[RMDB]
RNA sequence: GGGAACGACUCGAGUAGAGUCGAAAAAUCACUCUGAGGGUAUUUUGAAUGGCAGUUGAGUAUUUUUAGCUGUCUUCCUUUAGGCUGUUAGGUGAGAGCUUUCCUUUCCUGGACAUGCACUUCGGUGGCUUCUCCAGGAGUAGGAGCCACAGGUGUGAAUGUGUGAACAUUUCGAUGUUCACACAUUAAAAGAAACAACAACAACAAC
Reactivity to 2A3 in 0.01 (KOAc 150mM, MgCl2 10mM, bicine 150mM(pH8.5), 24C), signal-to-noise 4, nucleotides 027 to 156: a000u020c010a000c020u110c030u030g040a050g070g060g000u080a100u080u260u210u210g100a080a060u160g010g010c030a000g010u040u050g030a030g030u180a300u110u300u050u070u080a020g010c000u000g000u020c000u020u070c000c000u060u110u090a070g060g010c030u040g090u170u050a040g020g060u060g060a150g010a030g080c000u100u090u110c000c000u020u000u020c000c000u010g050g000a020c020a040u060g000c000a020c030u060u110c170g140g010u030g080g090c030u000u010c000u010c020c010a020g000g010a010g000u040a000g000g000a000g000c000c000a010c000a010g050g020u040g010u020g080
Reactivity to DMS in 0.01 (KOAc 150mM, MgCl2 10mM, bicine 150mM(pH8.5), 24C), signal-to-noise 1, nucleotides 027 to 156: a080u000c040a010c040u000c010u000g010a090g020g010g010u000a040u000u000u020u010g010a050a050u020g020g040c010a030g010u000u030g010a060g000u010a050u020u000u000u000u010a010g010c000u000g000u010c020u000u000c000c050u010u000u000a090g020g000c010u010g030u000u000a070g030g030u010g010a070g010a120g000c030u000u000u000c010c010u010u000u010c020c000u020g010g010a040c070a100u000g010c030a050c010u000u000c210g040g050u000g020g020c020u000u000c070u000c000c030a070g020g010a070g050u010a010g030g040a070g020c020c020a020c020a110g000g010u010g030u000g010

About this RNA:
Chemical mapping of a 207-nucleotide RNA with 2A3 and DMS. Conditions: 150 mM KOAc, 10 mM MgCl2 and 150 mM bicine (pH 8.5), 24 C. The 2A3 profile rests on 2,262 reads. Values cover nucleotides 27 to 156.